[RMDB]
RNA sequence: GGGAACGACUCGAGUAGAGUCGAAAACGGCAAAAAAGCAAACUUGACCACCAAGGAUAAAAGAGAUCUUAUCCAAGGAUGCAAAAGAUAAUCUCACUUUUGACACCCAGUGAUCUCGAACUUAAAGAAAACCGAGACUACUUCGGUAGUCUCGGAAUCGAGUCUAUAACUUCGGUUAUAGACUCGAAAAAGAAACAACAACAACAAC
Reactivity to DMS in 0.01 (KOAc 150mM, MgCl2 10mM, bicine 150mM(pH8.5), 24C), signal-to-noise 1, nucleotides 027 to 156: c070g000g000c070a020a080a070a060a090a070g030c050a100a110a180c040u000u000g000a140c050c050a040c020c050a050a300g000g000a110u010a020a030a020a110g050a090g000a090u010c020u000u000a060u010c100c010a140a230g030g000a020u000g030c000a020a070a070a010g010a180u010a050a100u000c070u000c120a100c000u000u000u000u000g000a160c030a030c000c030c020a130g010u020g000a040u000c000u010c070g000a120a180c070u000u000a040a020a190g010a040a040a090a150c030c000g000a010g000a030c000u000a000c000u000u040c300g050g000u000a020g080u000c010u000c000g000g000a010a000
Reactivity to 2A3 in 0.01 (KOAc 150mM, MgCl2 10mM, bicine 150mM(pH8.5), 24C), signal-to-noise 3, nucleotides 027 to 156: c040g040g000c030a050a010a000a040a040a070g110c070a110a070a080c050u100u060g070a180c030c010a010c000c010a040a050g060g000a070u030a100a080a020a010g000a000g000a010u010c000u020u070a030u060c060c030a050a040g000g020a030u040g000c000a020a040a020a000g030a040u140a210a240u130c070u060c120a040c020u090u030u020u010g050a080c010a020c000c000c020a060g020u030g020a010u020c000u010c000g020a080a050c040u120u170a100a040a090g080a020a100a060a020c010c010g000a000g000a000c000u000a000c000u030u030c100g060g000u000a000g000u000c000u000c010g000g000a000a000
The record gives the reactivity of an RNA of 207 nucleotides to DMS and 2A3.
The reactions ran in a buffer of 150 mM KOAc, 10 mM MgCl2 and 150 mM bicine (pH 8.5), at 24 C.
The data come from the RNA Mapping Database (RMDB), library M2RFPK.